[RMDB]
Annotation:
The data come from the RNA Mapping Database (RMDB), library OK2TST. The record gives the reactivity of an RNA of 177 nucleotides to 2A3 and DMS. The 2A3 profile rests on 4,336 reads. The RNA was probed in 150 mM KOAc, 10 mM MgCl2 and 150 mM bicine (pH 8.5) at 24 C.
RNA sequence: GGGAACGACUCGAGUAGAGUCGAAAAAGGUAUAGUGUGGGAAAAGGUGCCUUUCUCAUUCGUUGUCGACUGGCUCCUACCUGUAGGUAACAUGCUCGAGGGCCUUACGGCCCCCGUGGGAUGCUCCCCUACUUGGAUACUUCGGUAUCCAAGUAGGAAAAGAAACAACAACAACAAC
Reactivity to 2A3 in 0.01 (KOAc 150mM, MgCl2 10mM, bicine 150mM(pH8.5), 24C), signal-to-noise 3, nucleotides 027 to 126: a000g100g020u110a110u080a070g120u120g020u110g070g050g030a060a080a070a040g060g020u040g030c000c000u030u030u000c020u000c000a090u130u140c140g110u070u070g010u040c030g000a040c010u000g010g000c000u020c040c000u030a060c000c020u040g060u040a020g000g040u020a050a030c020a020u070g060c010u010c010g010a030g010g000g010c030c000u120u200a080c120g010g010c030c010c000c000c010g020u110g010g000g020a010u010g000c020u050c030c030
Reactivity to DMS in 0.01 (KOAc 150mM, MgCl2 10mM, bicine 150mM(pH8.5), 24C), signal-to-noise 4, nucleotides 027 to 126: a040g010g010u000a040u000a060g020u010g030u000g020g010g000a070a060a090a090g000g000u000g010c030c020u020u000u000c010u000c040a100u000u010c140g000u000u000g030u000c120g000a070c100u000g010g010c080u010c020c020u000a060c040c050u000g000u000a070g020g010u000a050a110c030a020u000g000c020u000c010g010a010g000g010g010c000c000u000u010a130c300g020g000c000c010c010c000c010g010u010g000g010g000a040u000g010c080u000c050c020

Reactivities are given for positions 27 through 126.
DMS adducts were read by reverse transcription with MarathonRT.